[RMDB]
RNA sequence: GGGAACGACUCGAGUAGAGUCGAAAAUCGUGACGUAGACGGUAAGCAUGACGUUAAGUACUCGUUGUUCUACCAGAUGACCCGUAUCACUCGUGAGAAAGGCGCUCUGGCUCAUGAUGACCGAUUGCCACAGAAGAGCUUUCGAGCUCUUCUGUGGAAAAGAAACAACAACAACAAC
Reactivity to 2A3 in 0.01 (KOAc 150mM, MgCl2 10mM, bicine 150mM(pH8.5), 24C), signal-to-noise 1, nucleotides 027 to 126: u020c000g020u000g030a040c090g000u030a000g070a070c030g020g020u070a100a000g080c050a070u090g020a040c030g040u000u080a100a090g060u060a060c010u010c100g030u020u050g040u040u070c040u040a080c060c000a000g000a160u060g090a140c040c000c000g000u040a020u000c010a020c000u060c040g090u050g020a030g080a030a060a000g060g010c040g020c010u000c000u000g050g000c020u000c020a020u090g020a010u060g040a010c020c020g000a200u090u160g090
Reactivity to DMS in 0.01 (KOAc 150mM, MgCl2 10mM, bicine 150mM(pH8.5), 24C), signal-to-noise 2, nucleotides 027 to 126: u030c010g020u010g010a060c160g020u000a100g000a090c080g010g000u000a060a030g000c150a070u000g020a010c110g000u010u010a070a150g000u000a100c110u000c130g000u000u000g000u000u000c040u020a100c030c000a110g000a090u000g000a120c040c020c050g000u010a170u000c030a020c080u000c230g010u000g000a000g000a050a110a070g000g000c060g000c260u000c000u010g000g000c070u000c040a040u000g000a070u000g010a150c070c040g000a060u010u000g000
The record gives the reactivity of an RNA of 177 nucleotides to 2A3 and DMS. The DMS profile rests on 1,076 reads. Values cover nucleotides 27 to 126. 2A3 adducts were read by reverse transcription with SuperScript II with manganese. The reactions ran in a buffer of 150 mM KOAc, 10 mM MgCl2 and 150 mM bicine (pH 8.5), at 24 C.